This 177-nucleotide RNA was probed chemically with DMS. For DMS, 1,961 sequencing reads were counted. For DMS the reverse transcriptase was MarathonRT. Values cover nucleotides 27 to 126. The RNA was probed in 150 mM KOAc, 10 mM MgCl2 and 150 mM bicine (pH 8.5) at 24 C.

RNA sequence: GGGAACGACUCGAGUAGAGUCGAAAACACGCCCACGGCUGUCAUGGUGGGCACCGGGGUGGCCGCGCAGAACGGCAUCCUCAUCAAGGGAGGCAAGCCCCUGGAGAUGGCGCACAAGGUCAGCCUGGCGUAAUGGGAGAUUCGUCUCCCAUUACGCAAAAGAAACAACAACAACAAC
Reactivity to DMS in 0.01 (KOAc 150mM, MgCl2 10mM, bicine 150mM(pH8.5), 24C), signal-to-noise 3, nucleotides 027 to 126: c210a150c200g020c050c000c080a060c110g000g000c010u000g010u000c020a090u010g000g040u000g000g000g040c000a030c050c030g000g000g020g020u000g000g020c020c000g040c040g020c300a110g000a100a080c020g010g000c020a150u010c000c000u000c080a060u010c260a100a120g000g000g020a040g000g000c300a090a230g000c060c000c010c020u010g020g000a160g000a070u010g060g020c010g000c040a030c040a110a080g000g000u010c030a020g010c020c000u010g000